RNA sequence: GGGAACGACUCGAGUAGAGUCGAAAAGAGGUCCAGGUUCCUCCCGCAAAGCGCCUUUCGCCAAACAUAAGAGGACUGAGGUCACACAGCCUGUGUUCUCUGGGCUGAGUGGAAUUACAGUAGAUUCACUUCGUAAUUGAUUCGUCAAUUACGAAGUAAAAGAAACAACAACAACAAC
Reactivity to DMS in 0.01 (KOAc 150mM, MgCl2 10mM, bicine 150mM(pH8.5), 24C), signal-to-noise 9, nucleotides 027 to 126: g010a120g010g010u000c030c040a090g010g010u000u000c020c020u000c020c030c050g020c150a060a100a110g010c100g010c090c040u000u000u000c060g020c030c050a060a090a100c140a090u020a100a090g010a070g010g000a040c030u000g010a080g010g000u000c020a050c060a130c060a040g000c010c000u000g010u000g010u000u000c030u000c020u000g000g000g010c010u000g000a080g020u000g000g000a050a050u000u000a090c060a050g000u000a070g010a150u010u000c090
Reactivity to 2A3 in 0.01 (KOAc 150mM, MgCl2 10mM, bicine 150mM(pH8.5), 24C), signal-to-noise 6, nucleotides 027 to 126: g080a030g020g050u040c040c040a020g060g010u050u060c010c010u020c010c010c010g010c090a080a070a030g070c040g040c040c000u040u110u080c050g030c040c020a090a120a070c060a110u190a130a070g020a030g070g010a010c010u050g040a020g050g030u050c010a010c000a000c000a060g010c000c000u080g020u040g030u120u030c050u010c010u030g000g010g000c000u010g020a020g030u030g020g050a040a030u120u070a090c030a040g110u120a020g060a150u080u110c020